[RMDB]
RNA sequence: GGGAACGACUCGAGUAGAGUCGAAAAGGCCCGACCGGAUGACCUAUGCUUUGCGGUAGGAAACAGGGUGGUGGAAGGCCCAGCAUAGGCAUGGGGCAAGGGCAACCUCAGGACAACUGGACCAGCAGGGCUGAGCUCCAAAGCCAUGUGUAUAUAAGCUUUUACUACCAUUCGUGGUAGUAAAAGCAAAAGAAACAACAACAACAAC
Reactivity to 2A3 in 0.01 (KOAc 150mM, MgCl2 10mM, bicine 150mM(pH8.5), 24C), signal-to-noise 2, nucleotides 027 to 156: g080g020c000c000c010g030a070c010c010g050g130a040u040g070a110c020c020u000a030u020g020c050u090u220u140g060c090g060g020u120a050g050g090a130a090a030c040a070g070g000g020u040g030g080u100g030g060a150a050g080g010c010c010c010a000g000c000a010u050a060g000g020c010a010u090g010g000g040g000c040a070a160g020g000g020c010a030a070c010c000u020c020a070g040g020a070c030a100a110c150u060g000g040a040c020c020a000g000c060a080g070g050g050c020u020g010a030g010c050u050c010c000a060a040a010g000c040c060a050u090g020u010g030u030a030u000a020u000a270a070
Reactivity to DMS in 0.01 (KOAc 150mM, MgCl2 10mM, bicine 150mM(pH8.5), 24C), signal-to-noise 1, nucleotides 027 to 156: g010g050c000c020c020g000a020c020c020g100g030a120u020g010a130c020c040u050a040u000g020c000u000u020u020g020c050g050g030u010a120g000g010a150a100a080c060a120g070g000g000u000g030g000u000g060g020a210a150g000g010c010c000c000a060g010c000a020u000a030g010g020c020a130u000g020g000g010g030c040a050a080g050g000g050c070a090a010c030c010u020c010a010g050g010a100c020a090a100c030u010g000g020a060c060c010a130g030c070a040g000g000g050c000u010g010a100g000c080u000c030c020a030a110a100g020c000c050a110u010g010u010g030u000a090u000a130u010a080a150